[RMDB]
RNA sequence: GGGAACGACUCGAGUAGAGUCGAAAACAGAUCCGGCGCCGACUUCAUCGCGAUGUACGCGUUCGUGUUCGCCGGGUUGCCGACGACCAGCACCUUCACGUCGCGGCUCGCGACUUCGUUCAGCGCAGCUGGCACCGUGAUUCGUCACGGUGCCAGCAAAAGAAACAACAACAACAAC
Reactivity to DMS in 0.01 (KOAc 150mM, MgCl2 10mM, bicine 150mM(pH8.5), 24C), signal-to-noise 1, nucleotides 027 to 126: c190a160g010a090u000c020c040g000g000c000g000c110c070g010a030c130u000u000c090a170u000c050g000c010g010a130u000g020u000a060c020g000c020g010u000u010c010g000u030g010u010u000c080g020c130c030g000g000g010u000u000g000c060c030g010a070c040g050a040c160c030a170g030c100a120c080c060u000u000c070a070c030g000u000c030g000c020g010g000c000u000c010g000c040g000a070c090u000u000c150g000u020u000c040a050g010c040g010c060a090
Reactivity to 2A3 in 0.01 (KOAc 150mM, MgCl2 10mM, bicine 150mM(pH8.5), 24C), signal-to-noise 2, nucleotides 027 to 126: c090a010g110a180u040c010c040g010g030c000g000c000c030g040a050c030u080u030c110a060u050c030g000c040g060a080u230g050u200a120c010g020c000g030u050u070c000g020u020g030u140u130c050g030c030c070g100g010g000u020u040g050c050c040g080a190c040g010a040c000c020a010g030c010a070c010c030u130u120c040a000c020g030u040c050g010c000g040g010c010u030c010g000c020g020a030c020u010u040c040g020u050u030c050a010g020c040g010c000a010

The record gives the reactivity of an RNA of 177 nucleotides to DMS and 2A3. For DMS the reverse transcriptase was MarathonRT. For 2A3 the reverse transcriptase was SuperScript II with manganese. It was measured as part of the RMDB library OK2TRN.